Chemical mapping of a 177-nucleotide RNA with DMS and 2A3. Values cover nucleotides 27 to 126. The data come from the RNA Mapping Database (RMDB), library TTRDEL. The reactions ran in a buffer of 150 mM KOAc, 10 mM MgCl2 and 150 mM bicine (pH 8.5), at 24 C. 2A3 adducts were read by reverse transcription with SuperScript II with manganese. The 2A3 profile rests on 62,511 reads.
RNA sequence: GGGAACGACUCGAGUAGAGUCGAAAAGAUAUGGAGAGGCCAGCAACAGCUACGGAUCGGAAACGAUCCCGUAGACAUGCUGACCGCUCCUAAGUCAAAGAUAGAUAUCGUUCGCGAUAUCUAUCAACAUGUUAUCCUAGUUCGCUAGGAUAACAUGAAAAGAAACAACAACAACAAC
Reactivity to DMS in 0.01 (KOAc 150mM, MgCl2 10mM, bicine 150mM(pH8.5), 24C), signal-to-noise 9, nucleotides 027 to 126: g000a020u000a120u010g000g000a020g000a040g000g010c000c000a010g020c000a080a120c260a170g010c000u000a000c010g000g000a010u000c000g010g000a030a030a060c000g000a000u000c110c090c080g020u000a000g010a050c130a090u010g000c000u000g000a010c000c000g000c000u000c000c000u000a000a050g000u000c010a110a120a110g000a010u000a000g000a010u000a000u000c000g020u000u010c230g020c010g010a010u000a010u000c000u000a000u000c000a080a180
Reactivity to 2A3 in 0.01 (KOAc 150mM, MgCl2 10mM, bicine 150mM(pH8.5), 24C), signal-to-noise 7, nucleotides 027 to 126: g000a010u020a020u070g000g000a000g010a020g020g000c030c010a000g000c040a060a270c070a300g030c010u000a000c000g000g010a000u000c000g010g000a010a010a000c000g000a000u010c000c030c070g000u000a000g030a080c040a110u170g000c000u000g000a010c000c000g020c000u000c000c000u000a030a000g020u010c050a180a060a060g000a000u010a000g000a000u000a000u000c030g020u060u080c300g000c010g180a000u000a000u000c000u000a000u000c000a000a010